The record gives the reactivity of an RNA of 207 nucleotides to 2A3. The reactions ran in a buffer of 150 mM KOAc, 10 mM MgCl2 and 150 mM bicine (pH 8.5), at 24 C. It was measured as part of the RMDB library OK3TST.

RNA sequence: GGGAACGACUCGAGUAGAGUCGAAAAUGACAUCAACGCAGUAUACAACGGACGCAUUUGGUUAAUGAGACGCACCAAUCCAAUUAUACCGCCACCAAACCGCUACCGCCUAAUCUCAAAUCUAAAAGUACGCACAUAUGAUCCUGAAGGUUAUUACCCGCAGCAUAGAAUUCGUUCUAUGCUGCGGAAAAGAAACAACAACAACAAC
Reactivity to 2A3 in 0.01 (KOAc 150mM, MgCl2 10mM, bicine 150mM(pH8.5), 24C), signal-to-noise 2, nucleotides 027 to 156: u050g060a010c050a060u050c020a030a040c020g010c050a030g040u030a080u040a090c110a130a050c090g030g020a060c050g020c030a010u070u050u050g050g020u070u120a020a060u190g040a050g020a040c060g050c070a010c020c000a020a020u050c000c010a010a000u110u020a010u070a090c000c080g030c000c000a040c000c030a030a000a090c100c020g020c030u030a010c010c000g000c010c000u060a050a060u000c020u060c080a030a190a100u080c060u180a060a080a010a000g060u050a030c030g000c140a020c020a060u170a060u090g080a060u020c010c080u030g100a060a010g080g000u110u160a070u130u150a100c020